An RNA of 177 nucleotides, treated with 2A3 and DMS and read out base by base. The DMS profile rests on 18,666 reads. DMS adducts were read by reverse transcription with MarathonRT. It was measured as part of the RMDB library 15KREP. 2A3 is a SHAPE reagent: it acylates the 2'-hydroxyl of flexible nucleotides of all four kinds. The reactions ran in a buffer of 150 mM KOAc, 10 mM MgCl2 and 150 mM bicine (pH 8.5), at 24 C. Reactivities are given for positions 27 through 126.
[RMDB]
RNA sequence: GGGAACGACUCGAGUAGAGUCGAAAAUUCCGGAGAUCUUUCUCGAGCUCCUCCGCCUUUUUCCUUGCUGUGAUCCAUUUCUCGAGGGUCUCCUCCCUUGUUCCCCUUCGUCCUCUCCUCGUCUCGGCAUUGUAAUCAUGUUCGCAUGAUUACAAUGAAAAGAAACAACAACAACAAC
Reactivity to 2A3 in 0.01 (KOAc 150mM, MgCl2 10mM, bicine 150mM(pH8.5), 24C), signal-to-noise 4, nucleotides 027 to 126: u060u020c030c010g010g020a020g010a020u020c020u060u160u040c030u070c040g010a020g030c020u030c000c000u020c000c010g050c010c000u080u090u030u090u050c010c000u030u090g040c030u050g030u070g060a060u060c020c020a080u080u130u030c040u010c010g010a050g000g020g020u020c010u010c010c000u030c010c000c010u010u060g040u020u020c000c000c010c010u020u040c010g030u020c010c000u010c000u020c010c000u010c010g040u010c010u010c020g010g010
Reactivity to DMS in 0.01 (KOAc 150mM, MgCl2 10mM, bicine 150mM(pH8.5), 24C), signal-to-noise 5, nucleotides 027 to 126: u000u000c070c040g010g010a070g000a050u000c020u010u010u000c020u000c040g000a090g020c130u000c030c020u000c030c040g000c030c020u000u000u000u000u000c020c020u000u000g020c050u010g010u000g010a080u000c040c040a100u000u000u010c030u000c030g000a090g010g010g010u000c050u000c030c020u000c010c010c020u000u000g010u000u000c010c010c010c100u000u000c050g010u000c050c020u000c020u000c010c010u000c040g000u000c030u000c070g010g020